RNA sequence: GGGAACGACUCGAGUAGAGUCGAAAAACGCUUCACAAUGUGCGGCAAAGAAACAUUGUUUAUGCAAAGGCACUUCGCAAUGUGUGCUCGAACAUUGCUUAUUCAAACACGCUUCACAAUGUGCGACAAAACUUCACGGUCUUCGGACCGUGAAGAACUUCUUAUUUGAGUUCGCUCAAAUAAGAAGAAAAGAAACAACAACAACAAC
Reactivity to 2A3 in 0.01 (KOAc 150mM, MgCl2 10mM, bicine 150mM(pH8.5), 24C), signal-to-noise 9, nucleotides 027 to 156: a000c010g000c010u030u030c010a000c000a010a020u020g000u000g000c010g040g030c100a100a080a080g090a030a080a000c010a010u010u000g100u040u100u100a120u120g040c050a070a060a070g140g000c010a010c020u070u080c080g000c050a050a040u040g020u000g030u020g040c110u080c110g050a020a010c020a030u010u010g010c010u110u130a140u140u160c070a020a090a030c050a020c080g060c030u110u110c070a030c030a140a170u150g030u040g040c020g050a040c070a030a130a030a030c000u000u000c000a000c000g000g000u000c000u030u070c120g090g000a000c000c000g000u000g000a000a000g000a000a000
Reactivity to DMS in 0.01 (KOAc 150mM, MgCl2 10mM, bicine 150mM(pH8.5), 24C), signal-to-noise 2, nucleotides 027 to 156: a030c040g020c020u010u000c030a050c010a000a020u000g080u000g040c000g000g000c000a110a150a080g020a090a000a020c020a030u000u010g010u000u000u010a070u020g030c060a090a110a100g010g010c010a020c020u000u000c100g000c080a100a070u010g030u010g010u000g010c050u000c040g000a110a040c010a050u000u010g010c050u000u000a050u010u010c040a090a130a050c030a040c040g000c030u000u000c100a110c070a090a070u000g020u010g040c050g020a150c080a040a050a070a090c010u000u000c010a020c000g030g000u000c000u010u010c300g040g000a000c000c010g050u000g000a000a000g010a050a060